RNA sequence: GGGAACGACUCGAGUAGAGUCGAAAAGGAGCGACAAGUAUUUAGCUUGAGAUAGCUAAAUCACCUCGGUAUGAUUAGGGUGAGGCCUAGGAACCGUAGGGGUAUUCUCAAAGGAAGCUUUUGCAGUGAAGGAAGAUACGAUUCGUCGUAUCUUCAACAAAUGACAGAGGUUCGCCUCUGUCAUUUGAAAAGAAACAACAACAACAAC
Reactivity to 2A3 in 0.01 (KOAc 150mM, MgCl2 10mM, bicine 150mM(pH8.5), 24C), signal-to-noise 3, nucleotides 027 to 156: g050g000a040g020c010g080a070c040a120a020g030u090a090u000u010u000a000g000c000u030u050g020a040g010a110u200a030g020c000u020a020a000a000u010c020a010c000c020u020c030g020g010u260a190u250g060a080u070u060a020g000g000g030u070g080a040g050g040c000c010u020a020g010g030a010a010c020c000g000u050a030g010g020g000g010u030a070u160u070c070u010c000a050a050a010g060g040a050a060g020c010u080u110u100u110g010c080a040g020u020g150a120a030g100g010a010a010g000a000u000a000c000g000a020u050u070c150g040u010c000g000u080a010u000c000u010u010c000a000a000
Reactivity to DMS in 0.01 (KOAc 150mM, MgCl2 10mM, bicine 150mM(pH8.5), 24C), signal-to-noise 2, nucleotides 027 to 156: g000g020a100g030c070g010a090c030a030a090g030u000a030u000u010u000a010g010c030u000u000g010a300g010a120u000a030g000c010u010a000a020a030u000c030a040c000c040u000c000g020g000u010a110u010g000a210u000u000a070g030g000g040u000g000a120g020g020c000c020u000a080g020g000a110a060c030c040g010u000a050g000g000g020g030u010a060u000u010c010u010c040a070a160a140g010g020a060a190g010c030u000u000u000u000g000c060a110g020u010g000a090a170g040g020a040a020g000a020u000a010c040g020a030u000u000c300g060u000c000g040u000a000u010c010u010u000c000a050a130